[RMDB]
RNA sequence: GGGAACGACUCGAGUAGAGUCGAAAAGGUGGCUCGACGCACGUGCGAAAAGAGACGACUCACGAGUCACCGAUUUAGCAUGUUCGUCCUUUUGGGGCCCCCGGCAUAAUUUUGGACGUUCAUGCGAGGGAUGGUGAUGCUUCGGCAUUACCAUCCCAAAAGAAACAACAACAACAAC
Reactivity to 2A3 in 0.01 (KOAc 150mM, MgCl2 10mM, bicine 150mM(pH8.5), 24C), signal-to-noise 5, nucleotides 027 to 126: g030g010u030g000g010c000u020c020g070a110c020g070c030a150c080g100u210g110c040g120a060a030a030a050g120a020g020a040c040g070a100c030u050c030a060c010g000a000g000u010c000a000c000c000g010a000u010u010u070a000g000c000a000u000g000u000u010c020g000u000c000c010u060u100u160u160g070g000g110g010c000c000c000c020c010g040g000c040a060u070a150a120u100u180u130u120g000g000a000c000g000u000u000c000a010u000g000c020g010a070
Reactivity to DMS in 0.01 (KOAc 150mM, MgCl2 10mM, bicine 150mM(pH8.5), 24C), signal-to-noise 2, nucleotides 027 to 126: g000g030u010g000g020c000u000c000g050a300c140g000c080a210c270g020u030g010c020g010a110a030a110a170g010a060g000a070c090g000a180c010u010c070a120c000g000a020g000u000c000a010c000c000g000a010u030u020u010a050g000c010a010u000g000u000u000c010g020u010c000c010u000u000u000u000g000g030g000g000c000c000c050c080c040g020g010c040a060u070a040a060u030u010u040u020g000g010a010c000g020u000u000c030a000u000g020c050g000a080